RNA sequence: GGGAACGACUCGAGUAGAGUCGAAAAUAGACUCCGAUUGAAAAAGUACCGGGUAACAUGCAGUCGUAACUACACACUUCUUUGUAUUUCCUCAGGGAUGGGAAACCCCGGCCAAGCUGGAAAUUAACCGUGAUUAUGCAUUCGUGCAUAAUCACGGAAAAGAAACAACAACAACAAC
Reactivity to 2A3 in 0.01 (KOAc 150mM, MgCl2 10mM, bicine 150mM(pH8.5), 24C), signal-to-noise 1, nucleotides 027 to 126: u090a000g050a030c060u030c030c020g090a070u180u230g030a070a050a010a000a000g090u060a050c010c000g000g000g030u080a070a030c060a050u170g060c040a000g000u050c040g050u040a070a050c070u200a040c100a000c030a010c030u050u030c060u000u070u070g040u010a070u040u070u000c010c020u090c050a050g000g000g110a100u060g010g010g040a070a070a060c020c010c010c000g010g000c000c000a070a040g000c080u040g030g060a020a050a050u110u100a000a150
Reactivity to DMS in 0.01 (KOAc 150mM, MgCl2 10mM, bicine 150mM(pH8.5), 24C), signal-to-noise 1, nucleotides 027 to 126: u030a030g000a040c010u000c000c020g000a180u000u010g000a000a060a050a040a080g010u000a040c020c000g040g030g000u010a000a150c010a050u040g040c030a090g030u010c000g030u020a000a150c110u010a010c130a200c100a060c060u010u000c060u030u000u040g000u020a030u000u000u000c000c030u010c100a210g000g050g020a010u000g000g000g000a120a130a260c080c000c000c030g000g030c050c000a060a200g030c070u000g000g030a070a030a010u030u060a070a090